[RMDB]
About this RNA:
Chemical mapping of a 177-nucleotide RNA with DMS. It was measured as part of the RMDB library OK2TRN. The RNA was probed in 150 mM KOAc, 10 mM MgCl2 and 150 mM bicine (pH 8.5) at 24 C.

RNA sequence: GGGAACGACUCGAGUAGAGUCGAAAACUCAUUUUUGAAAGUAGGCAGGGCUCCAAACAACUUCGUUUACCUUGCCGAGGACAAACCUGUCUGUCCUGCAGACACUAUGGGCCUUGUACAGACCCCAACCGUAGAACCGAUUCGUCGGUUCUACGGUAAAAGAAACAACAACAACAAC
Reactivity to DMS in 0.01 (KOAc 150mM, MgCl2 10mM, bicine 150mM(pH8.5), 24C), signal-to-noise 1, nucleotides 027 to 126: c020u020c040a090u000u010u000u000u020g000a160a110a020g000u010a080g000g040c000a020g000g000g000c210u020c170c180a050a000a030c060a180a140c300u000u000c240g000u020u000u000a050c010c020u010u000g010c030c000g000a060g020g000a080c010a040a040a120c280c150u000g000u000c050u000g000u010c090c070u000g010c010a080g020a140c050a030c250u000a100u010g010g040g010c010c010u020u000g000u010a070c130a050g020a110c030c020c020c270a020